This 177-nucleotide RNA was probed chemically with DMS and 2A3.
[RMDB]
RNA sequence: GGGAACGACUCGAGUAGAGUCGAAAAGGCAGCGAAUUCGUUCGCUGCCAAUACAGGACGUGGAGCCGGCUUCACGGCGCACGUCGAUGACGCCCGCGCCGGAGAAUCCAGAUUUCGAUCUGGAUAAGCUGUGCGUUAGAUUCGUCUAACGCACAGCAAAAGAAACAACAACAACAAC
Reactivity to DMS in 0.01 (KOAc 150mM, MgCl2 10mM, bicine 150mM(pH8.5), 24C), signal-to-noise 1, nucleotides 027 to 126: g020g000c000a010g010c000g040a010a040u000u000c200g010u000u000c010g020c020u010g000c010c000a020a010u000a110c150a050g010g010a010c010g080u000g000g000a160g000c010c020g010g000c250u000u000c190a110c020g010g030c000g020c000a040c000g010u000c000g010a040u000g000a100c070g000c050c000c050g010c130g000c040c010g000g010a140g020a190a060u000c000c000a020g000a040u010u010u010c170g010a050u030c010u050g000g000a010u000a030a040
Reactivity to 2A3 in 0.01 (KOAc 150mM, MgCl2 10mM, bicine 150mM(pH8.5), 24C), signal-to-noise 1, nucleotides 027 to 126: g000g000c000a000g020c000g020a000a060u080u170c250g120u040u000c010g060c000u000g000c000c000a000a000u020a000c000a000g210g030a010c010g020u030g040g000a050g020c000c000g010g020c080u270u110c160a100c080g010g000c020g000c000a010c010g010u000c020g000a120u120g050a000c030g020c000c000c000g100c040g030c020c090g190g050a060g000a120a020u040c010c000a000g000a010u080u110u130c140g060a000u030c000u000g000g000a000u020a060a000
Annotation
The 2A3 profile rests on 1,062 reads.